Source information: Conditions: 150 mM KOAc, 10 mM MgCl2 and 150 mM bicine (pH 8.5), 24 C. Structure probing data (2A3 and DMS) for a 207-nucleotide construct. For 2A3, 8,271 sequencing reads were counted. Values cover nucleotides 27 to 156. Source: RMDB library RNAMAK, as collected in RNAgym.
RNA sequence: GGGAACGACUCGAGUAGAGUCGAAAACUGAAUUCGUUCAGAACACAGAUAUGGAGUUACGAGGAUCGCACUGACAUGGUGUGCUCAUCGGAAACGAUGAGAUCACCAACAGCAGUGCGGGAGUAACUCCUAAGUCGGGGAGCCGCUUCGGCGGCAAGUUAGCUCUUGAAUUCGUUCAAGAGCUAACAAAAGAAACAACAACAACAAC
Reactivity to 2A3 in 0.01 (KOAc 150mM, MgCl2 10mM, bicine 150mM(pH8.5), 24C), signal-to-noise 6, nucleotides 027 to 156: c010u030g020a020a020u140u090c190g090u100u040c040a040g080a210a070c130a020c030a120g050a040u070a070u240g000g000a000g000u000u010a020c020g040a220g100g010a020u010c000g010c000a000c000u020g090a160c020a100u060g010g000u040g070u180g150c000u000c000a000u010c010g030g050a040a090a040c010g000a000u000g000a000g000a020u100c000a000c000c020a030a050c080a070g040c000a000g000u000g000c010g000g000g000a010g000u000a000a000c000u000c000c000u000a000a000g000u010c020g000g000g000g080a040g000c010c010g000c050u060u070c230g130g000c000g000g000c000a000a010
Reactivity to DMS in 0.01 (KOAc 150mM, MgCl2 10mM, bicine 150mM(pH8.5), 24C), signal-to-noise 3, nucleotides 027 to 156: c030u000g020a070a080u000u010c240g030u000u000c040a060g000a170a110c030a030c020a040g010a040u000a300u000g000g000a060g000u000u000a010c020g010a180g040g000a100u000c010g010c010a000c000u020g000a030c100a300u010g010g020u000g010u000g010c020u000c000a010u010c020g030g000a160a100a210c020g000a020u010g000a000g000a110u000c010a020c000c000a020a060c050a150g010c010a030g010u010g010c000g020g000g000a100g020u000a020a020c000u000c000c020u010a000a040g010u000c010g020g000g000g010a120g020c000c000g080c000u000u000c200g070g010c000g050g060c020a010a070